[RMDB]
RNA sequence: GGGAACGACUCGAGUAGAGUCGAAAAGGGGUCCUUACACCCUUGGAUUUAUUAGGCUUUUGACGAUCUGAAGCCUCCACGGAUCGAUAAGCCUAAUUGUCAGGGUUGAAGGACGGAGGCACCCAAAGGUUAAUCAGCGUUCGCGCUGAUUAACCAACACUACCGCGAUGUUCGCAUCGCGGUAGUGAAAAGAAACAACAACAACAAC
Reactivity to 2A3 in 0.01 (KOAc 150mM, MgCl2 10mM, bicine 150mM(pH8.5), 24C), signal-to-noise 1, nucleotides 027 to 156: g030g000g000g000u030c000c020u000u040a100c000a020c000c000c020u030u030g080g030a110u240u300u160a070u020u090a010g080g000c100u230u140u150u140g170a050c050g000a000u040c000u000g090a110a060g000c000c010u050c000c000a070c050g000g000a010u000c010g050a100u040a140a000g000c000c000u000a000a040u090u080g030u130c030a010g000g000g000u070u070g070a000a000g000g000a010c000g010g000a010g000g010c040a020c030c000c030a120a140a080g000g000u000u000a000a000u010c000a000g010c010g070u050u140c220g000c010g020c110u000g000a000u000u010a000a000c000c010a000a000